[RMDB]
RNA sequence: GGGAACGACUCGAGUAGAGUCGAAAAAGGAGAAGCAGCGGCUGAAGGUGGUACUCUUCCAAGGAUAUAAGGAGAAGGCGGACGUUCCCUUCUGUGUCUUCAGAGUGGCACUCAUGGCUCGUGCCAAUCUCACUCGCUGAUUCGUCAGCGAGUGAGAAAAAGAAACAACAACAACAAC
Reactivity to DMS in 0.01 (KOAc 150mM, MgCl2 10mM, bicine 150mM(pH8.5), 24C), signal-to-noise 1, nucleotides 027 to 126: a050g000g000a050g000a090a080g030c050a040g010c100g020g000c090u010g010a140a180g020g040u000g000g000u000a020c060u010c020u020u000c030c100a120a080g010g010a100u010a110u010a070a120g010g010a050g010a050a050g010g030c060g000g020a150c040g010u000u000c020c000c010u020u020c010u000g020u000g000u010c040u000u010c080a010g020a080g000u000g010g020c060a020c030u020c160a070u000g000g010c040u010c150g000u030g020c020c010a050a200
This 177-nucleotide RNA was probed chemically with DMS. It was measured as part of the RMDB library OK2TRN. In probing experiments dimethyl sulfate is read out at A N1 and C N3, which are open when not base-paired. The RNA was probed in 150 mM KOAc, 10 mM MgCl2 and 150 mM bicine (pH 8.5) at 24 C.